[RMDB]
RNA sequence: GGGAACGACUCGAGUAGAGUCGAAAAUCUAGUCUAUUCGUAGACUAGAAAAGACUGCUGCCGGCAGGGUUGACUGCGCCGUGCAGAAACGGCAAAGGAAAAAAACUCUUGCUUUCGAGCAAGAGAACUAACGAAUCGAGUUCGCUCGAUUCGUUAGAAAAGAAACAACAACAACAAC
Reactivity to DMS in 0.01 (KOAc 150mM, MgCl2 10mM, bicine 150mM(pH8.5), 24C), signal-to-noise 1, nucleotides 027 to 126: u000c000u000a020g010u000c000u000a050u000u020c190g070u000a000g000a020c000u010a000g000a010a110a200a180g020a080c050u020g020c020u000g020c010c050g000g000c000a240g030g000g030u030u000g000a080c020u000g000c300g040c000c020g010u000g040c080a070g020a110a130a040c050g000g000c020a060a260a120g010g010a000a000a100a070a090a070a160c000u040c000u000u000g000c000u000u000u010c170g000a010g020c000a000a000g010a010g010a010a120

An RNA of 177 nucleotides, treated with DMS and read out base by base.
The DMS profile rests on 602 reads.